[RMDB]
RNA sequence: GGGAACGACUCGAGUAGAGUCGAAAAGAUAUGGAACACCACGGUGACAUGCUCGAUUGCGUCGGAAACGACGUAGAGAGCAACAGCACCUGGUGUUCCUAAGUCAAAAGUCGGCUUCGGCCGACAAUCGACUAUUAAUGUUCGCAUUAAUAGUCGAAAAAGAAACAACAACAACAAC
Reactivity to 2A3 in 0.01 (KOAc 150mM, MgCl2 10mM, bicine 150mM(pH8.5), 24C), signal-to-noise 7, nucleotides 027 to 126: g010a010u080a040u140g000g000a000a010c000a000c000c030a050c300g000g000u020g060a180c050a230u170g000c010u020c020g220a300u090u300g000c000g010u000c010g010g020a060a080a050c010g000a010c000g000u020a000g010a000g000a010g030c010a020a000c050a020g050c000a000c000c000u000g000g000u000g000u000u000c000c000u000a000a000g000u000c000a000a020a040a180g000u000c000g000g000c000u090u150c300g160g000c000c000g000a000c000a000a040
Reactivity to DMS in 0.01 (KOAc 150mM, MgCl2 10mM, bicine 150mM(pH8.5), 24C), signal-to-noise 9, nucleotides 027 to 126: g000a040u010a300u010g000g010a020a010c000a020c000c010a010c270g010g010u000g010a060c100a240u000g010c000u000c010g000a300u010u000g010c000g010u000c000g000g000a110a110a200c000g010a010c000g020u000a010g010a300g000a010g010c000a020a050c260a160g010c010a010c000c000u000g000g010u000g000u000u000c000c000u000a010a040g000u000c040a110a070a120a140g010u000c010g010g000c000u000u010c220g030g010c000c000g010a000c010a010a050
Background: Chemical mapping of a 177-nucleotide RNA with 2A3 and DMS. Values cover nucleotides 27 to 126. Reactivities are rounded to 0.1 and cut off at 0 and 3. Source: RMDB library TTRDES, as collected in RNAgym. Conditions: 150 mM KOAc, 10 mM MgCl2 and 150 mM bicine (pH 8.5), 24 C.